An RNA of 177 nucleotides, treated with DMS and 2A3 and read out base by base. The 2A3 profile rests on 2,646 reads. The RNA was probed in 150 mM KOAc, 10 mM MgCl2 and 150 mM bicine (pH 8.5) at 24 C. The data come from the RNA Mapping Database (RMDB), library OK2TRN.
RNA sequence: GGGAACGACUCGAGUAGAGUCGAAAACUCAAAAUCGCACUGUGAAUACUGUGCGUGUCACACAGACUAACCCCCAAGGAGGAAGUUCAGUGUCAAACCCAGCUGUGACAACUUCUCAGAAUACAGGACGAUUGGUAGAAUUCGUUCUACCAAUCGUAAAAGAAACAACAACAACAAC
Reactivity to DMS in 0.01 (KOAc 150mM, MgCl2 10mM, bicine 150mM(pH8.5), 24C), signal-to-noise 6, nucleotides 027 to 126: c030u010c050a100a080a100a100u000c010g010c010a020c010u000g020u000g020a170a110u010a070c030u000g020u000g010c030g030u000g010u000c070a050c100a100c160a130g000a060c040u020a140a270c030c020c000c010c030a100a120g000g010a050g010g010a070a120g010u000u000c030a030g020u000g000u010c090a050a100a120c050c010c040a160g010c030u010g000u010g010a040c070a040a190c070u000u010c020u010c070a130g020a110a100u010a080c180a090g030g000
Reactivity to 2A3 in 0.01 (KOAc 150mM, MgCl2 10mM, bicine 150mM(pH8.5), 24C), signal-to-noise 3, nucleotides 027 to 126: c020u010c000a030a000a000a070u090c000g000c000a000c020u010g030u070g260a280a070u190a290c010u020g010u000g000c060g000u010g010u000c010a050c000a020c010a090g060a090c060u090a110a180c000c010c030c010c010a000a030g060g010a010g010g010a070a030g000u020u020c010a020g010u000g060u100c050a030a030a070c000c020c020a020g000c040u040g010u050g060a010c020a020a010c030u080u010c030u000c000a000g100a060a030u220a120c030a030g070g060